[RMDB]
RNA sequence: GGGAACGACUCGAGUAGAGUCGAAAAGAUAUGGACCAUGAGAGCUUUUGACGAAGGCUGCUCGGAAACGAGCAGUCUUCGAUAAGCUCACAUGGUCCUAAGUCAAAGAAUGCGUUCGCGCAUUCAAGGGUUAUAUUACGUUCGCGUAAUAUAACCCAAAAGAAACAACAACAACAAC
Reactivity to DMS in 0.01 (KOAc 150mM, MgCl2 10mM, bicine 150mM(pH8.5), 24C), signal-to-noise 4, nucleotides 027 to 126: g000a040u010a300u000g000g000a000c010c000a000u000g010a090g020a000g010c010u000u000u020u000g000a300c160g030a010a010g030g000c000u000g000c000u000c010g000g000a110a100a190c010g020a000g010c000a010g010u000c000u000u010c020g020a050u000a020a030g010c000u000c000a070c000a000u000g010g000u000c000c000u000a010a050g000u000c030a130a160a140g000a020a010u000g000c010g030u000u010c290g020c010g010c000a010u010u000c000a090a160
Reactivity to 2A3 in 0.01 (KOAc 150mM, MgCl2 10mM, bicine 150mM(pH8.5), 24C), signal-to-noise 3, nucleotides 027 to 126: g020a000u060a020u150g000g000a000c010c000a000u000g020a030g000a010g120c030u080u210u300u300g220a180c060g000a000a030g020g000c010u010g010c000u000c010g000g020a030a080a020c010g010a000g000c000a000g000u000c000u000u000c000g000a000u000a010a000g010c000u000c000a000c000a000u000g010g000u010c010c010u000a010a000g000u000c000a000a030a090g010a000a010u010g020c000g020u020u090c300g000c010g000c180a000u010u000c010a050a130

An RNA of 177 nucleotides, treated with DMS and 2A3 and read out base by base. For 2A3, 8,047 sequencing reads were counted. Reactivities are rounded to 0.1 and cut off at 0 and 3. The data come from the RNA Mapping Database (RMDB), library TTRDES. For DMS, 5,357 sequencing reads were counted. Conditions: 150 mM KOAc, 10 mM MgCl2 and 150 mM bicine (pH 8.5), 24 C.